Structure probing data (2A3 and DMS) for a 207-nucleotide construct. Source: RMDB library M2RFPK, as collected in RNAgym. For DMS, 1,353 sequencing reads were counted. Reactivities are given for positions 27 through 156. The RNA was probed in 150 mM KOAc, 10 mM MgCl2 and 150 mM bicine (pH 8.5) at 24 C.
[RMDB]
RNA sequence: GGGAACGACUCGAGUAGAGUCGAAAAGUAUGGAUGCCACCGUGACGGCUCAAUCACACAAGUGCCAACGAUAACGAGGCGCUCGCUAUUGCUGCGUAACUGACGGCCUGACGGUCUGACGUUACGAAAAACGAAAAGUGGUUCGCCACUUUUCGAAGUAUGAUGGUGACUUCGGUCACCAUCAUACAAAAGAAACAACAACAACAAC
Reactivity to 2A3 in 0.01 (KOAc 150mM, MgCl2 10mM, bicine 150mM(pH8.5), 24C), signal-to-noise 3, nucleotides 027 to 156: g080u070a080u120g090g030a070u120g040c020c020a050c060c040g080u090g070a060c030g000g000c010u020c050a060a100u130c040a020c020a020c020a140a070g010u030g020c000c020a080a100c080g090a100u140a250a030c070g020a080g010g020c020g000c030u050c040g040c040u070a080u180u200g040c050u060g000c020g000u000a010a010c020u030g010a010c010g000g040c000c000u150g100a040c160g010g000u000c000u000g010a000c000g000u000u000a000c000g000a010a010a010a000a000c030g010a000a000a000a000g000u000g020g000u020u040c110g030c030c000a000c000u000u000u000u010c010g000a070a000
Reactivity to DMS in 0.01 (KOAc 150mM, MgCl2 10mM, bicine 150mM(pH8.5), 24C), signal-to-noise 1, nucleotides 027 to 156: g030u010a010u000g000g000a090u000g000c030c000a130c060c130g000u000g020a150c100g000g020c000u010c030a120a100u010c010a060c050a160c050a080a110g000u000g010c050c000a080a150c090g000a110u000a110a110c040g020a300g010g080c040g020c040u010c030g060c000u000a010u000u000g000c040u000g000c000g010u010a010a020c010u000g000a300c300g010g000c030c010u010g010a180c280g050g000u000c000u000g050a300c300g000u000u000a000c040g000a000a010a070a070a270c040g000a000a080a030a030g060u000g020g010u000u040c300g000c020c000a000c000u000u000u000u000c030g010a000a080